[RMDB]
RNA sequence: GGGAACGACUCGAGUAGAGUCGAAAAAUAAACAUGGUUACCAUAAACUAAGGCUGAAGGUAGCCAUGAACAGCCUUAGUUAAAUAAAAGCUGAGCGUUAGGAAAAACCUAAUGCUCUGCAAAAAAACACAGAUAGGAAGUUCGCUUCCUAUCUGUGAAAAGAAACAACAACAACAAC
Reactivity to DMS in 0.01 (KOAc 150mM, MgCl2 10mM, bicine 150mM(pH8.5), 24C), signal-to-noise 1, nucleotides 027 to 126: a090u010a100a040a170c050a030u010g020g030u010u000a040c030c000a160u000a120a050a020c010u000a010a010g000g000c000u000g030a080a060g000g010u010a060g010c120c130a070u010g020a030a110c100a030g000c000c000u000u000a020g000u010u000a060a060a090u000a020a070a060a120g010c000u000g000a000g010c020g010u000u000a000g000g000a090a120a110a160a120c000c000u000a000a000u000g010c000u000c000u010g000c000a000a000a050a080a090a070a060
Reactivity to 2A3 in 0.01 (KOAc 150mM, MgCl2 10mM, bicine 150mM(pH8.5), 24C), signal-to-noise 1, nucleotides 027 to 126: a000u150a000a090a000c010a030u030g050g000u060u030a010c030c000a050u120a130a080a000c000u020a030a010g060g000c000u020g110a190a070g070g000u040a020g030c010c010a010u030g000a000a030c020a000g000c000c010u050u040a040g040u030u080a060a040a030u100a020a070a010a060g000c010u010g000a000g000c020g010u000u010a000g020g030a150a090a120a200a120c000c000u000a020a000u000g020c020u000c000u000g000c000a020a020a010a030a020a010a010